The record gives the reactivity of an RNA of 177 nucleotides to DMS.
Source: RMDB library TTRINS, as collected in RNAgym.
The reactions ran in a buffer of 150 mM KOAc, 10 mM MgCl2 and 150 mM bicine (pH 8.5), at 24 C.

[RMDB]
RNA sequence: GGGAACGACUCGAGUAGAGUCGAAAAGAUAUGGACCCAUGUGGUCUCAACAGCAGUUAAAAUCCCUAGGAUCGGAAACGAUCCUAGGGAUUUUAACUGACAUGAGGACACAUCGGGUCCUAAGUCACGUUUAAACAUGGUUCGCCAUGUUUAAACGAAAAGAAACAACAACAACAAC
Reactivity to DMS in 0.01 (KOAc 150mM, MgCl2 10mM, bicine 150mM(pH8.5), 24C), signal-to-noise 2, nucleotides 027 to 126: g010a040u000a300u020g000g010a040c000c000c010a020u000g010u000g000g010u000c000u000c000a070a140c300a230g000c020a000g000u000u000a000a000a010a030u000c000c000c000u000a000g010g000a030u000c000g000g000a230a090a220c010g000a000u000c000c000u010a000g020g000g000a000u000u000u000u000a000a000c000u000g000a030c060a220u000g000a040g000g000a020c000a000c000a000u010c130g070g010g020u000c000c000u020a000a090g010u000c040a150
For DMS the reverse transcriptase was MarathonRT.